The record gives the reactivity of an RNA of 177 nucleotides to 2A3. The RNA was probed in 150 mM KOAc, 10 mM MgCl2 and 150 mM bicine (pH 8.5) at 24 C.
RNA sequence: GGGAACGACUCGAGUAGAGUCGAAAAAGUCAGCGGAUACGUCCGCUGACACGGUGUUAGCAGGUUACAUGCGGUGCAGUAUGGUAGUGGAAAAUGCUGCAUCCCUUGUGACCUCCGUACAGAGUAAUUGAUCGACCUUCUUCGGAAGGUCGAUCAAAAAAGAAACAACAACAACAAC
Reactivity to 2A3 in 0.01 (KOAc 150mM, MgCl2 10mM, bicine 150mM(pH8.5), 24C), signal-to-noise 1, nucleotides 027 to 126: a000g010u000c010a000g000c060g000g000a010u070a080c300g040u030c000c000g000c000u000g000a000c000a000c000g050g000u070g030u110u200a120g070c120a030g000g000u000u000a000c000a090u020g000c080g000g040u000g000c000a000g000u000a090u000g180g170u160a100g150u300g140g020a080a070a000a000u000g000c020u000g000c000a180u200c060c000c000u000u000g000u000g000a000c000c000u180c000c010g070u130a040c000a080g180a020g090u100a000a050